[RMDB]
RNA sequence: GGGAACGACUCGAGUAGAGUCGAAAACUAUUUAUAGACAGAGUGGAAAUUACUGAAUAUCAAAAUCAACCUCGAGCACGUAUUGAUCCGGUGGUACGAUUCCAAUUGGGCGAGGCAUAAGCAGAAAGGAUAGUUGAGGAUUCGUCUUCAGCUAUCCAAAAGAAACAACAACAACAAC
Reactivity to 2A3 in 0.01 (KOAc 150mM, MgCl2 10mM, bicine 150mM(pH8.5), 24C), signal-to-noise 4, nucleotides 027 to 126: c000u010a030u090u130u050a100u050a010g060a010c020a000g030a020g050u020g020g050a060a000a050u130u040a080c020u020g000a030a010u040a030u060c010a000a000a010a010u010c010a000a000c000c000u000c000g000a000g010c020a010c020g020u030a030u020u070g010a010u000c000c000g000g000u030g000g010u020a020c010g030a030u050u000c020c000a030a040u110u050g030g010g000c000g000a000g000g000c010a060u040a060a010g050c020a020g040a040a060a000
Reactivity to DMS in 0.01 (KOAc 150mM, MgCl2 10mM, bicine 150mM(pH8.5), 24C), signal-to-noise 8, nucleotides 027 to 126: c030u010a040u020u020u020a080u020a080g000a170c070a030g000a090g000u010g010g020a060a060a080u020u020a080c060u010g000a060a080u020a060u020c020a010a010a010a020u000c010a010a010c010c000u000c000g000a000g000c040a040c020g010u000a070u020u020g000a000u010c020c040g000g020u010g010g000u010a030c080g010a110u020u010c050c050a080a090u030u020g000g000g010c030g000a040g000g020c080a050u020a060a090g000c090a070g000a080a120a140